[RMDB]
RNA sequence: GGGAACGACUCGAGUAGAGUCGAAAAGAGAAUAGUCAUCGUAGACAACGGACCGAAUUAUUCGAAAGGACUGGGUGUCGUGUUUGGCGAAAUUAGAGACUUCAGGAAUCCAAUCGCUGAAGAAAGCAGUAGGAAGCUAAUUCGUUAGCUUCCUACUAAAAGAAACAACAACAACAAC
Reactivity to DMS in 0.01 (KOAc 150mM, MgCl2 10mM, bicine 150mM(pH8.5), 24C), signal-to-noise 8, nucleotides 027 to 126: g010a090g010a070a060u020a100g000u000c010a050u010c030g000u040a230g010a020c040a050a060c040g010g020a100c030c010g000a140a120u030u050a130u030u020c160g010a110a130a190g000g000a070c020u000g010g010g010u000g010u000c010g020u010g000u010u000u000g010g010c010g000a040a070a100u000u030a080g020a190g010a100c000u000u010c010a010g010g010a060a060u050c050c130a110a110u020c020g010c010u000g010a010a010g000a090a070a100g010c160
Reactivity to 2A3 in 0.01 (KOAc 150mM, MgCl2 10mM, bicine 150mM(pH8.5), 24C), signal-to-noise 9, nucleotides 027 to 126: g120a010g030a060a170u070a050g030u030c010a020u020c050g080u130a050g020a040c010a020a010c020g000g030a040c010c020g020a060a050u220u090a110u170u290c130g070a090a060a040g050g020a050c030u040g050g160g150u030g020u010c020g010u040g040u150u030u060g000g000c000g010a030a020a010u140u150a060g040a020g020a120c000u000u000c010a000g010g030a040a070u030c040c010a050a090u070c060g010c150u010g010a010a010g040a040a040a000g120c070

This 177-nucleotide RNA was probed chemically with DMS and 2A3.
Values cover nucleotides 27 to 126.
The reactions ran in a buffer of 150 mM KOAc, 10 mM MgCl2 and 150 mM bicine (pH 8.5), at 24 C.
2A3 adducts were read by reverse transcription with SuperScript II with manganese.
DMS adducts were read by reverse transcription with MarathonRT.